[RMDB]
RNA sequence: GGGAACGACUCGAGUAGAGUCGAAAACGCUGACGUUAAAGCGGGCAGCGAAGGCGGCUGGGUGGAUGAGGAAUGCGCUCUCAGCCAGCAGGGGGAGUGCUGGAUCUACGAUGUCAACAGCGUGGUCCAGCUCCGCCGCAUUCGUGCGGCGGAGCUGAAAAGAAACAACAACAACAAC
Reactivity to DMS in 0.01 (KOAc 150mM, MgCl2 10mM, bicine 150mM(pH8.5), 24C), signal-to-noise 1, nucleotides 027 to 126: c060g010c000u000g000a100c060g010u000u020a030a200a110g000c060g000g060g030c050a060g050c000g000a050a080g000g000c040g050g000c030u000g000g000g050u020g000g020a060u030g000a130g010g020a130a030u000g000c090g030c050u050c000u000c020a060g010c010c020a030g010c000a050g030g060g000g000g000a070g030u000g000c000u000g020g010a050u010c000u050a000c010g020a110u040g000u080c260a140a100c070a080g000c000g020u030g000g000u000c000
Reactivity to 2A3 in 0.01 (KOAc 150mM, MgCl2 10mM, bicine 150mM(pH8.5), 24C), signal-to-noise 2, nucleotides 027 to 126: c010g010c020u010g000a020c040g020u090u290a120a040a080g050c000g010g110g080c000a030g000c020g050a010a030g110g000c020g000g000c000u000g050g100g060u070g010g160a150u180g070a070g080g110a210a110u180g000c060g000c020u000c000u000c020a030g020c000c000a050g000c070a090g000g010g030g010g000a050g020u090g030c020u010g000g000a020u030c040u040a010c050g010a060u110g130u110c020a060a010c000a210g000c000g030u000g000g000u040c000
About this RNA
The record gives the reactivity of an RNA of 177 nucleotides to DMS and 2A3. As a SHAPE reagent, 2A3 marks flexible, mostly unpaired nucleotides at the ribose 2'-OH. The DMS profile rests on 1,619 reads.